[RMDB]
RNA sequence: GGGAACGACUCGAGUAGAGUCGAAAAUUGCAGCUCCUAUGAGUAAAACUGCAUUUACACCAAUAGAAUUGACACGCAAUGAGCCAAAUAAGAAAGUAACACAGGCAGCCACUAUACCUAGGUUUGCGUAUGCCAUUCGGUUCGCCGAAUGGCAUACAAAAGAAACAACAACAACAAC
Reactivity to DMS in 0.01 (KOAc 150mM, MgCl2 10mM, bicine 150mM(pH8.5), 24C), signal-to-noise 1, nucleotides 027 to 126: u000u010g010c070a000g020c050u010c010c260u020a210u000g010a110g030u010a070a060a100a190c050u000g000c000a050u000u000u000a060c110a190c030c050a060a060u000a110g000a070a120u000u000g000a060c070a020c070g000c070a060a050u000g030a070g030c030c060a040a080a040u000a070a080g000a080a030a060g000u000a030a070c090a010c030a140g020g000c030a000g000c010c010a040c130u010a050u000a040c070c030u010a110g010g000u000u000u000g000c240
Reactivity to 2A3 in 0.01 (KOAc 150mM, MgCl2 10mM, bicine 150mM(pH8.5), 24C), signal-to-noise 1, nucleotides 027 to 126: u040u030g010c000a000g000c000u000c010c040u080a120u220g030a060g070u060a020a280a160a050c040u070g040c010a020u040u080u140a030c050a010c020c000a060a050u110a100g220a100a060u030u110g010a030c000a000c160g000c020a000a170u110g020a020g020c070c020a030a000a190u160a010a030g150a130a010a040g000u150a090a020c030a000c020a030g000g030c050a010g050c030c030a100c010u060a020u080a180c020c020u040a020g060g030u060u040u040g010c050